[RMDB]
RNA sequence: GGGAACGACUCGAGUAGAGUCGAAAAUAAAACACGUAACGUGAGCACAGCUAGUAGUGCAGCAGGACCGAAACCUGCAGCGAAAGGGAUCAAGACCCUGUUCGCGCAAAUACUAGAGAAAAAAAAAACUUGUAUUAUACUUCGGUAUAAUACAAGUAAAAGAAACAACAACAACAAC
Reactivity to DMS in 0.01 (KOAc 150mM, MgCl2 10mM, bicine 150mM(pH8.5), 24C), signal-to-noise 2, nucleotides 027 to 126: u020a050a060a120a110c000a020c030g050u010a160a110c160g010u000g010a180g010c020a010c010a170g000c000u000a020g000u010a020g010u000g000c020a040g030c000a010g000g000a080c050c090g010a140a120a020c000c000u000g020c000a180g020c010g000a010a050a050g000g020g020a070u000c300a050a170g010a120c000c000c000u000g050u000u000c010g000c010g000c100a040a030a090u010a030c000u000a010g020a140g060a050a040a030a010a000a030a090a140a200
Reactivity to 2A3 in 0.01 (KOAc 150mM, MgCl2 10mM, bicine 150mM(pH8.5), 24C), signal-to-noise 2, nucleotides 027 to 126: u120a000a080a030a000c070a010c030g150u190a230a010c120g040u080g060a020g000c010a000c000a020g030c010u010a010g000u000a000g000u010g000c010a000g000c010a000g020g000a060c050c050g020a120a030a020c020c000u000g000c020a000g020c000g030a000a000a000g010g000g030a020u180c120a090a100g070a190c020c020c000u100g260u050u010c010g020c000g000c030a040a150a000u000a010c000u020a000g030a060g060a120a110a070a030a010a000a000a030a000
Record summary
Structure probing data (DMS and 2A3) for a 177-nucleotide construct. The RNA was probed in 150 mM KOAc, 10 mM MgCl2 and 150 mM bicine (pH 8.5) at 24 C. For 2A3, 1,624 sequencing reads were counted. Reactivities are given for positions 27 through 126. For DMS, 1,001 sequencing reads were counted.